[RMDB]
RNA sequence: GGGAACGACUCGAGUAGAGUCGAAAAUUCAAGGGUGUAUCGGAUUCUGUGGUGAGCCGCCCACGAAGUUGAACUAGAAAUUUAGCCCACUUUACACAAGAAGGGCGGGCGGAGGCGCGUUUGAGCCUCCCUAAAAAGUAUUCGUACUUUUUAGGGAAAAAGAAACAACAACAACAAC
Reactivity to 2A3 in 0.01 (KOAc 150mM, MgCl2 10mM, bicine 150mM(pH8.5), 24C), signal-to-noise 2, nucleotides 027 to 126: u080u040c010a020a040g060g000g000u020g020u040a080u100c010g030g050a060u120u030c030u100g060u040g070g030u060g020a030g040c010c010g050c020c000c000a030c040g020a040a020g020u050u110g020a070a020c040u040a100g100a080a190a110u140u140u060a080g000c000c010c010a020c010u050u040u130a100c120a010c000a030a110g070a060a120g020g000g020c030g010g010g010c030g020g020a010g010g010c030g000c040g040u000u020u080g010a010g000c020c000
Reactivity to DMS in 0.01 (KOAc 150mM, MgCl2 10mM, bicine 150mM(pH8.5), 24C), signal-to-noise 6, nucleotides 027 to 126: u000u000c060a110a140g000g020g020u000g010u000a080u010c060g010g000a100u010u000c060u000g030u000g000g030u010g010a110g020c040c030g010c040c020c010a100c140g010a040a040g020u000u000g010a050a140c070u000a090g000a080a080a120u010u000u010a070g010c010c010c020a110c040u000u000u000a100c150a100c220a080a070g000a100a090g020g000g010c040g010g000g010c070g000g010a050g010g010c040g010c070g020u000u000u000g000a090g010c020c030
An RNA of 177 nucleotides, treated with 2A3 and DMS and read out base by base.
For DMS the reverse transcriptase was MarathonRT.
For DMS, 6,498 sequencing reads were counted.
DMS (dimethyl sulfate) methylates the pairing face of unpaired adenines and cytosines.